[RMDB]
RNA sequence: GGGAACGACUCGAGUAGAGUCGAAAAGACGCUUUCGAGCGUCACUUCCUAAGUCUGUAGGGAGCCUGAACAGUGGCGAAGAACAUAUCGGAAACGAUAUGGGAGCCACUGCUCAGGCGACGAUCUACAGAUAUGGAGAUCUAGUGAUUCGUCACUAAUUGUGGACUUAGUUCGCUAAGUCCACAAUAAAAGAAACAACAACAACAAC
Reactivity to DMS in 0.01 (KOAc 150mM, MgCl2 10mM, bicine 150mM(pH8.5), 24C), signal-to-noise 2, nucleotides 027 to 156: g020a010c020g010c000u000u000u000c190g030a050g010c000g000u000c010a050c050u000u000c010c020u000a080a230g010u000c020u000g040u010a010g010g020g010a100g040c030c000u010g000a010a030c010a000g030u000g030g030c010g000a100a200g020a090a110c010a020u000a020u010c010g010g000a270a070a300c020g000a010u000a000u000g000g000g010a300g020c000c040a010c000u000g000c000u010c000a020g000g010c000g010a010c110g000a050u000c000u000a010c010a010g020a000u000a240u010g020g020a080g000a130u000c050u010a060g060u000g000a090u000u000c170g030u000c010a040c030u010a090
Reactivity to 2A3 in 0.01 (KOAc 150mM, MgCl2 10mM, bicine 150mM(pH8.5), 24C), signal-to-noise 4, nucleotides 027 to 156: g010a000c010g010c030u110u130u250c300g120a020g000c000g010u000c010a010c030u090u010c000c000u030a150a040g020u000c000u000g000u000a000g000g010g000a000g000c000c000u010g000a010a000c000a000g000u000g030g010c040g050a270a020g030a040a000c000a000u000a000u000c010g010g050a100a050a040c020g010a000u000a000u000g000g000g000a020g000c000c000a000c000u000g000c000u000c000a000g000g000c000g000a000c000g000a000u000c010u000a000c000a000g010a000u030a050u040g050g000a050g020a050u120c110u130a010g010u000g030a040u100u070c220g080u070c140a010c030u120a130